[RMDB]
RNA sequence: GGGAACGACUCGAGUAGAGUCGAAAACUCUUGCUUCCCCAAGAGGGCAAAGCGCUGGCCGCCUCACGCGAUGCCAAAUUUAUUGAGACGUCUAGCGGCAUACAGCACAACGUCGAUGAGCUGCUCGCCUACGUAAUCCCUUCGGGGAUUACGUAGGAAAAGAAACAACAACAACAAC
Reactivity to DMS in 0.01 (KOAc 150mM, MgCl2 10mM, bicine 150mM(pH8.5), 24C), signal-to-noise 2, nucleotides 027 to 126: c000u020c010u020u010g010c070u040u000c040c000c010c040a040a040g030a100g010g050g000c050a070a070a210g000c010g040c130u000g000g010c030c000g000c000c040u000c070a090c130g000c010g000a190u010g000c050c100a040a050a040u020u030u040a120u040u000g000a200g000a060c050g030u000c050u030a120g000c070g000g010c000a130u060a120c120a100g000c030a060c160a010a110c090g030u000c060g050a130u010g000a090g000c030u000g000c030u000c100g000
Reactivity to 2A3 in 0.01 (KOAc 150mM, MgCl2 10mM, bicine 150mM(pH8.5), 24C), signal-to-noise 5, nucleotides 027 to 126: c020u000c010u010u050g040c040u060u070c000c010c010c000a020a020g030a070g040g000g020c010a030a020a070g020c040g030c080u030g040g010c010c010g020c000c030u100c000a020c040g060c020g050a050u070g050c000c020a000a070a110u200u200u170a260u090u130g050a080g020a050c020g010u010c040u150a030g050c020g040g010c020a050u210a070c060a040g040c030a010c010a080a040c040g040u020c020g020a070u070g050a020g030c040u040g010c030u040c020g050